Chemical mapping of a 177-nucleotide RNA with DMS and 2A3.
For 2A3, 1,890 sequencing reads were counted.
For DMS the reverse transcriptase was MarathonRT.
RNA sequence: GGGAACGACUCGAGUAGAGUCGAAAACUGGCAAGGCGUAGAUGCUCGGGCUCGAUAUCGAUGGUGGUCAAGACGCCGUCGUCGCGCAUGCCCGACAACAGCCACAGGCCGCUGACGCCGGCCCCGGCAAGCAUUGAGGGUUCGCCCUCAAUGCUUGAAAAGAAACAACAACAACAAC
Reactivity to DMS in 0.01 (KOAc 150mM, MgCl2 10mM, bicine 150mM(pH8.5), 24C), signal-to-noise 2, nucleotides 027 to 126: c050u020g020g020c030a130a300g000g000c020g010u010a120g000a160u000g000c150u020c010g000g000g010c000u010c030g000a100u000a050u000c010g030a010u000g040g030u000g020g020u000c300a170a130g020a100c000g000c000c010g020u000c000g010u000c170g000c080g020c300a040u000g010c010c000c000g010a020c000a040a070c060a080g020c000c040a140c240a140g000g010c030c030g010c020u000g010a190c150g000c120c000g010g000c090c010c010c040g010g020
Reactivity to 2A3 in 0.01 (KOAc 150mM, MgCl2 10mM, bicine 150mM(pH8.5), 24C), signal-to-noise 2, nucleotides 027 to 126: c010u000g020g000c020a050a060g030g000c000g070u130a070g040a190u060g020c120u000c010g010g010g010c000u000c050g060a050u030a060u270c010g000a010u010g020g040u020g020g020u110c090a050a030g300a100c010g020c010c030g020u010c000g020u020c050g020c000g020c000a030u190g000c000c000c000g000a010c020a030a010c000a010g040c010c040a100c020a060g010g030c000c000g000c010u060g020a050c160g010c010c020g000g050c020c000c000c000g050g090